The data come from the RNA Mapping Database (RMDB), library RSTRND. The record gives the reactivity of an RNA of 207 nucleotides to 2A3. 2A3 adducts were read by reverse transcription with SuperScript II with manganese. The 2A3 profile rests on 611 reads. Reactivities are given for positions 27 through 156. The reactions ran in a buffer of 150 mM KOAc, 10 mM MgCl2 and 150 mM bicine (pH 8.5), at 24 C.
[RMDB]
RNA sequence: GGGAACGACUCGAGUAGAGUCGAAAAGGGGACGACAUGGCUUCGACGCUGGUAACAAAACCAAAGGUGCAUGUCGAGUGUACAGUGGCACUCGUACUCCAAUCGCUGUAAUCAAUAGUUGCAAACGAUGACAACUACGGUGCUCAACUAGCUGCGUGGAACACGCACUGUUCGCAGUGCGUGUUCCAAAAGAAACAACAACAACAAC
Reactivity to 2A3 in 0.01 (KOAc 150mM, MgCl2 10mM, bicine 150mM(pH8.5), 24C), signal-to-noise 1, nucleotides 027 to 156: g020g040g030g000a010c010g030a000c090a180u050g110g060c020u080u100c000g120a020c080g000c090u040g000g000u070a200a160c030a110a080a020a080c050c000a000a020a160g000g010u160g090c040a030u000g010u020c020g010a010g010u060g000u090a050c010a030g000u010g000g000c040a000c000u130c000g020u000a030c030u000c040c100a050a050u040c080g040c020u000g050u110a000a000u110c110a100a090u080a120g050u000u080g020c020a010a000a290c120g000a060u000g070a060c000a010a000c070u010a000c020g060g020u060g000c000u000c060a040a170c040u030a000g000c040u010g000c050g050u030